The data come from the RNA Mapping Database (RMDB), library OK2TST. An RNA of 177 nucleotides, treated with DMS and read out base by base. Reactivities are given for positions 27 through 126. The DMS profile rests on 848 reads.
RNA sequence: GGGAACGACUCGAGUAGAGUCGAAAAGAGGUGGUCGAAGUGACCGAAUCGGCUCUCGAAUAUAGAGCCCAAGGUUCCGAACAGAUGGCUCGCCUCACGGCGCCAGUCUCCACCAACUUGCAACGGGCGCUGCGACAUUAUUCGUAAUGUCGCAGCGAAAAGAAACAACAACAACAAC
Reactivity to DMS in 0.01 (KOAc 150mM, MgCl2 10mM, bicine 150mM(pH8.5), 24C), signal-to-noise 2, nucleotides 027 to 126: g000a260g010g030u000g030g030u010c050g000a300a150g010u000g000a130c130c060g000a050a090u000c110g020g000c000u010c000u010c120g000a140a100u040a140u000a030g030a050g020c010c010c220a030a080g050g000u000u000c070c020g060a210a060c110a060g000a180u000g000g000c000u010c090g010c010c000u000c180a150c200g020g000c000g010c020c010a000g010u000c020u020c000c020a130c040c010a080a150c070u010u000g000c000a050a030c020g020g000g020